RNA sequence: GGGAACGACUCGAGUAGAGUCGAAAAUAGUUUGUACUAUAGUAUUUAUGUAAUCGACAAUGGUAUAAAAUACUUGCCACCACCUUUUCCAAUUAAUUCUAGUUACACGUUGCAUUUUUGGUACAACCCAUGCUUAUGAAUUCGUUCAUAAGCAUGGAAAAGAAACAACAACAACAAC
Reactivity to 2A3 in 0.01 (KOAc 150mM, MgCl2 10mM, bicine 150mM(pH8.5), 24C), signal-to-noise 3, nucleotides 027 to 126: u040a030g050u060u040u110g010u010a010c000u020a010u040a100g080u030a130u070u110u020a120u130g030u040a090a070u060c030g040a050c100a160a060u090g030g020u060a030u080a090a110a030a020u080a050c030u050u030g040c020c010a010c000c010a040c000c000u000u050u060u010c020c010a080a070u080u090a080a100u120u060c050u060a020g050u050u050a060c080a000c080g050u040u040g000c020a030u050u030u040u090u110g050g010u040a010c010a010a010c010
Reactivity to DMS in 0.01 (KOAc 150mM, MgCl2 10mM, bicine 150mM(pH8.5), 24C), signal-to-noise 5, nucleotides 027 to 126: u010a040g000u000u000u010g010u000a030c010u010a070u000a090g010u010a060u010u000u010a040u010g000u010a040a070u000c060g010a080c170a080a070u000g000g000u000a040u000a040a040a040a110u000a060c040u000u000g010c040c030a060c060c050a050c050c020u000u000u000u000c010c030a080a090u010u010a050a080u010u000c070u010a090g010u000u000a060c120a060c110g010u000u000g020c050a050u000u000u000u000u000g010g010u000a050c070a040a060c130